An RNA of 177 nucleotides, treated with DMS and read out base by base.
The DMS profile rests on 1,137 reads.
Reactivities are given for positions 27 through 126.
[RMDB]
RNA sequence: GGGAACGACUCGAGUAGAGUCGAAAAAGACGCCGUGGUGGGCGAGAAAGCGCCCUAUUUUUGUGGAGGGUUUAUCUUGUGUGACUCCGUGACCGGCACAGCGUGCCGUGUGGCAGACCCCCUAAAACUCUAGAGAGGCAUUCGUGCCUCUCUAGAGAAAAGAAACAACAACAACAAC
Reactivity to DMS in 0.01 (KOAc 150mM, MgCl2 10mM, bicine 150mM(pH8.5), 24C), signal-to-noise 1, nucleotides 027 to 126: a090g010a110c110g040c000c010g000u010g010g040u000g020g010g030c030g020a110g020a060a110a100g030c120g020c010c000c010u000a000u010u000u000u000u000g020u000g010g010a030g000g000g000u000u000u000a070u010c030u000u010g000u000g020u020g010a090c030u000c040c070g030u000g010a060c040c000g000g000c010a020c020a140g010c250g010u000g010c010c000g000u020g000u010g020g000c040a080g000a210c050c010c010c030c020u000a050a040a120a140
It was measured as part of the RMDB library OK2TST.